Background: The record gives the reactivity of an RNA of 177 nucleotides to DMS and 2A3. Values cover nucleotides 27 to 126. The reactions ran in a buffer of 150 mM KOAc, 10 mM MgCl2 and 150 mM bicine (pH 8.5), at 24 C.
RNA sequence: GGGAACGACUCGAGUAGAGUCGAAAAAGCAUGGCCUAGUUGCAUGCCGAAGUUCAUACCCGACAUCUGAUUCAUCAUCUGCAUCAUGGGGCCGACCAUCUCGCGCGCUUCCUCAGGAAGGGAAUCGCAAUCAUCAUGACUUCGGUCAUGAUGAUUGAAAAGAAACAACAACAACAAC
Reactivity to DMS in 0.01 (KOAc 150mM, MgCl2 10mM, bicine 150mM(pH8.5), 24C), signal-to-noise 4, nucleotides 027 to 126: a110g010c050a040u000g020g010c040c030u000a100g020u010u000g020c030a040u000g000c030c040g010a090a100g000u010u010c090a090u000a140c030c020c030g000a090c130a080u010c090u000g010a080u000u010c060a070u010c070a080u000c040u000g000c060a040u010c040a090u000g010g010g010g000c060c010g010a070c080c040a040u010c060u000c050g030c110g010c060g010c110u000u000c010c000u000c110a100g010g010a070a100g000g000g020a050a050u010c090g010
Reactivity to 2A3 in 0.01 (KOAc 150mM, MgCl2 10mM, bicine 150mM(pH8.5), 24C), signal-to-noise 2, nucleotides 027 to 126: a000g020c030a030u050g080g050c020c030u100a090g070u200u150g040c010a020u050g000c010c040g070a060a000g060u070u100c040a050u120a190c000c010c020g020a030c020a050u060c090u070g040a100u070u030c020a050u040c000a020u000c040u040g010c020a020u030c020a070u130g000g040g020g000c000c000g010a020c010c000a060u000c010u030c040g020c000g000c000g000c000u000u000c000c000u030c040a060g050g100a050a070g030g010g030a000a030u100c020g000